[RMDB]
RNA sequence: GGGAACGACUCGAGUAGAGUCGAAAACGACGCAGGUUCGCCUGCGUCGCACUACCGAGAAUGCGACUCGGUAUAUUAAAACGGGCCUUGGAAACAAGGCAAAUAAGGCCAGAUUCGUCUGGCCUAAUCUUAGAUACACCUUCGGGUGUAUCUAAGAAAAAGAAACAACAACAACAAC
Reactivity to 2A3 in 0.01 (KOAc 150mM, MgCl2 10mM, bicine 150mM(pH8.5), 24C), signal-to-noise 1, nucleotides 027 to 126: c000g010a000c010g000c010a000g030g020u030u140c150g120c010c000u030g000c000g000u020c000g000c000a050c000u010a000c000c010g000a000g030a040a120u300g080c080g040a040c010u010c010g010g020u020a010u000a000u070u110a020a020a020a030c030g030g060g000c000c000u010u000g040g010a000a040a020c000a000a000g000g000c020a000a020a000u040a010a000g000g000c000c000a010g010a070u040u020c110g040u010c060u010g010g000c000c000u000a000a000
Reactivity to DMS in 0.01 (KOAc 150mM, MgCl2 10mM, bicine 150mM(pH8.5), 24C), signal-to-noise 3, nucleotides 027 to 126: c000g000a000c000g010c000a010g000g010u000u010c280g010c000c000u000g000c000g010u010c000g000c030a060c060u000a030c000c010g000a010g000a020a060u000g030c270g000a040c000u000c010g020g000u000a000u000a010u000u010a020a000a010a030c050g000g010g010c000c000u010u000g000g000a230a100a180c020a010a010g000g020c000a000a010a060u020a100a040g020g030c010c000a000g000a030u000u010c210g000u000c010u000g000g010c010c000u000a000a040
The record gives the reactivity of an RNA of 177 nucleotides to 2A3 and DMS. The RNA was probed in 150 mM KOAc, 10 mM MgCl2 and 150 mM bicine (pH 8.5) at 24 C. It was measured as part of the RMDB library M2PK50. DMS adducts were read by reverse transcription with MarathonRT.